An RNA of 177 nucleotides, treated with DMS and 2A3 and read out base by base. The DMS profile rests on 3,412 reads.
RNA sequence: GGGAACGACUCGAGUAGAGUCGAAAAGAAGGACAUAACGCGAAGAAGCAGAGAGAAGACUGAAGUGACGCGAUUCACUAGACGUCAACGACGGCAAGAGAGAGCCGAAGGAGACGAUCCUUAGGAGCAUGGGCGUAAUCUUCGGAUUACGCCCAUGAAAAGAAACAACAACAACAAC
Reactivity to DMS in 0.01 (KOAc 150mM, MgCl2 10mM, bicine 150mM(pH8.5), 24C), signal-to-noise 3, nucleotides 027 to 126: g030a070a030g020g010a050c080a110u010a130a050c110g000c120g000a120a130g000a110a100g010c040a020g010a070g010a170g020a080a080g000a040c050u000g000a140a060g020u000g000a060c020g010c060g000a130u000u010c070a020c040u010a070g000a100c200g000u000c010a070a140c080g000a300c030g000g000c060a030a070g010a140g000a170g000a070g000c020c020g010a050a230g000g000a220g000a050c090g000a110u000c010c030u000u060a110g030g000a060g000
Reactivity to 2A3 in 0.01 (KOAc 150mM, MgCl2 10mM, bicine 150mM(pH8.5), 24C), signal-to-noise 3, nucleotides 027 to 126: g080a040a010g020g000a030c000a080u130a110a020c050g000c040g010a120a070g010a090a010g090c010a010g000a000g000a000g010a160a000g030a020c030u030g070a060a000g030u040g080a000c000g000c040g130a040u070u000c000a020c100u050a080g000a030c010g010u000c010a000a000c000g010a010c010g010g000c010a200a010g020a010g020a000g020a030g130c000c000g010a000a000g020g000a000g010a000c040g050a040u060c000c000u020u120a000g030g050a020g030